Structure probing data (2A3 and DMS) for a 177-nucleotide construct. The 2A3 profile rests on 28,953 reads. Source: RMDB library OK2TST, as collected in RNAgym.
RNA sequence: GGGAACGACUCGAGUAGAGUCGAAAAAAGCACACAUCAAGGCUCCCUUGCCAGCAGGGUGCUGCCAAUAAAAGGUAGUCACGUGGAAUUUGGAAUGUGGAAAGGAGGUAGAAGUCAUCCUUUCCUCCAUAUGGUUCUAUUUCGAUAGAACCAUAUGAAAAGAAACAACAACAACAAC
Reactivity to 2A3 in 0.01 (KOAc 150mM, MgCl2 10mM, bicine 150mM(pH8.5), 24C), signal-to-noise 9, nucleotides 027 to 126: a010a000g070c050a040c010a010c010a090u110c070a090a040g040g000c010u030c020c010c000u010u050g050c020c010a030g020c020a040g130g030g040u060g000c010u010g000c010c010a060a030u200a140a140a020a010g010g000u020a020g040u100c020a000c080g080u070g060g070a100a100u090u070u100g070g070a130a090u170g020u030g050g010a010a010a010g010g010a010g040g010u100a060g060a300a020g100u060c020a090u020c040c000u010u000u020c000c000u000c010
Reactivity to DMS in 0.01 (KOAc 150mM, MgCl2 10mM, bicine 150mM(pH8.5), 24C), signal-to-noise 9, nucleotides 027 to 126: a070a050g010c050a050c050a070c090a080u010c120a120a090g000g010c020u000c030c010c020u000u000g010c060c030a060g010c090a090g010g010g020u000g010c020u000g000c030c020a060a100u010a070a070a110a080g000g010u000a020g010u010c040a050c060g010u000g000g010a080a100u010u010u000g010g010a080a080u000g010u000g000g000a020a020a020g000g010a020g000g020u000a090g010a110a120g010u010c040a090u000c010c010u000u000u000c000c000u010c060